Chemical mapping of a 177-nucleotide RNA with DMS and 2A3. DMS adducts were read by reverse transcription with MarathonRT. For 2A3 the reverse transcriptase was SuperScript II with manganese. DMS (dimethyl sulfate) methylates the pairing face of unpaired adenines and cytosines. Conditions: 150 mM KOAc, 10 mM MgCl2 and 150 mM bicine (pH 8.5), 24 C. The data come from the RNA Mapping Database (RMDB), library TTRDEL.

RNA sequence: GGGAACGACUCGAGUAGAGUCGAAAAGAUAUGGAGAGGAUACCACUAAGACAGCACCUCGGAAACGAGGUGUCGAGUGGUUAUCUACCCACCUCCUAAGUCAAAGACUAAGGUUCGCCUUAGUCAACAUGGGAAUAUGGUUCGCCAUAUUCCCAUGAAAAGAAACAACAACAACAAC
Reactivity to DMS in 0.01 (KOAc 150mM, MgCl2 10mM, bicine 150mM(pH8.5), 24C), signal-to-noise 9, nucleotides 027 to 126: g000a020u000a040u010g000g000a020g020a300g020g010a020u000a010c000c010a020c000u020a300a110g000a030c300a070g000c010a010c000c000u000c000g010g000a020a020a040c010g000a010g000g020u000g000u000c010g000a010g020u000g000g010u010u000a000u000c010u000a160c230c120c090a120c230c000u000c000c010u000a030a090g000u000c020a100a080a130g010a010c000u010a000a010g000g000u000u010c270g030c000c000u000u000a000g000u000c010a060a110
Reactivity to 2A3 in 0.01 (KOAc 150mM, MgCl2 10mM, bicine 150mM(pH8.5), 24C), signal-to-noise 4, nucleotides 027 to 126: g000a020u040a020u070g000g000a020g020a050g050g000a000u000a010c000c010a010c010u060a140a010g010a010c000a010g010c000a010c000c000u010c010g000g000a010a020a010c010g000a000g000g000u010g010u000c000g000a000g000u010g020g000u110u040a000u000c000u040a100c070c050c010a270c060c010u000c000c000u020a010a010g020u030c070a210a080a060g000a010c000u000a000a000g070g010u040u140c300g150c030c000u000u010a000g000u010c010a000a000